[RMDB]
RNA sequence: GGGAACGACUCGAGUAGAGUCGAAAAAAGUUUUAAAAAUUGGAGGAGAUAGAUUAAUCGAAGUCAUUUAAAGAUGAAGAUAAGUGCAUUCACAAAAAAUAGCCACACUCAUAUGACAUCGGAUGAGCAUAUUAUCGAACUUCGGUUCGAUAAUAUGAAAAGAAACAACAACAACAAC
Reactivity to DMS in 0.01 (KOAc 150mM, MgCl2 10mM, bicine 150mM(pH8.5), 24C), signal-to-noise 5, nucleotides 027 to 126: a050a070g010u030u010u010u020a030a050a040a090a090u010u010g000g000a060g010g020a080g000a070u010a060g000a090u030u010a070a060u020c020g000a110a120g000u000c000a040u020u020u030a090a080a100g000a050u010g010a060a110g010a090u010a070a040g020u010g000c030a050u010u010c070a040c130a020a020a050a080a060a050u000a080g020c060c060a050c090a120c070u020c020a020u000a020u010g000a040c070a040u000c030g000g020a030u010g010a050g010
Reactivity to 2A3 in 0.01 (KOAc 150mM, MgCl2 10mM, bicine 150mM(pH8.5), 24C), signal-to-noise 6, nucleotides 027 to 126: a020a010g220u180u060u040u100a100a150a050a030a060u190u120g030g030a070g020g020a040g040a030u110a060g080a050u110u260a070a050u150c030g010a060a010g020u000c010a020u050u110u300a110a160a070g120a080u060g040a090a050g050a090u100a160a090g040u080g040c020a050u030u120c090a040c080a100a080a070a030a000a020u080a060g060c050c010a020c000a000c020u040c020a040u060a070u150g050a090c020a110u100c070g070g070a060u050g070a050g020